[RMDB]
RNA sequence: GGGAACGACUCGAGUAGAGUCGAAAAGAUAUGGAGCAGCAGUAGCUGAUGACCUAACGCCUCAACAGCGAGCUCGGAAACGAGCUCGACAUGAGGAUGUUAGCAAGGCUACUGCUGCUCCUAAGUCGCUAAGACUAAGGUUCGCCUUAGUCUUAGCAAAAGAAACAACAACAACAAC
Reactivity to DMS in 0.01 (KOAc 150mM, MgCl2 10mM, bicine 150mM(pH8.5), 24C), signal-to-noise 4, nucleotides 027 to 126: g020a120u010a300u000g010g000a010g020c010a010g000c010a010g000u000a000g010c000u000g020a050u020g000a110c300c010u000a000a000c000g010c010c000u000c010a100a110c300a260g020c010g000a010g000c010u000c000g000g010a090a080a180c000g000a010g000c000u010c000g000a010c120a150u010g010a010g030g020a030u000g010u000u000a000g000c030a050a070g010g000c000u000a000c000u010g000c000u010g010c000u000c000c000u000a000a080g010u010c080
Source: RMDB library TTRINS, as collected in RNAgym. Structure probing data (DMS) for a 177-nucleotide construct. For DMS, 3,316 sequencing reads were counted. The reactions ran in a buffer of 150 mM KOAc, 10 mM MgCl2 and 150 mM bicine (pH 8.5), at 24 C.